[RMDB]
RNA sequence: GGGAACGACUCGAGUAGAGUCGAAAAUCAUUCACGACGCGUCAUCAGUGGUCACCGAGCUGCAGACGCCCAGCGCCCUGCGCGCGUUCACUAGUGUGCUGGUUGUGCAUUCCGUUGGGGCCGCGACUACCUGGCAAGGAUUCGUCCUUGCCAGGUAAAAAGAAACAACAACAACAAC
Reactivity to DMS in 0.01 (KOAc 150mM, MgCl2 10mM, bicine 150mM(pH8.5), 24C), signal-to-noise 2, nucleotides 027 to 126: u010c080a090u020u010c080a070c070g010a040c080g010c040g000u000c050a070u000c050a070g030u010g000g020u000c100a100c080c050g010a100g010c040u000g010c120a090g010a090c050g000c030c050c060a040g010c050g010c020c030c040u010g000c100g000c060g000c070g000u000u000c070a100c080u020a090g010u000g040u010g030c040u000g020g010u000u010g020u010g020c080a080u000u000c020c050g010u000u000g000g000g000g000c030c020g000c010g030a110c170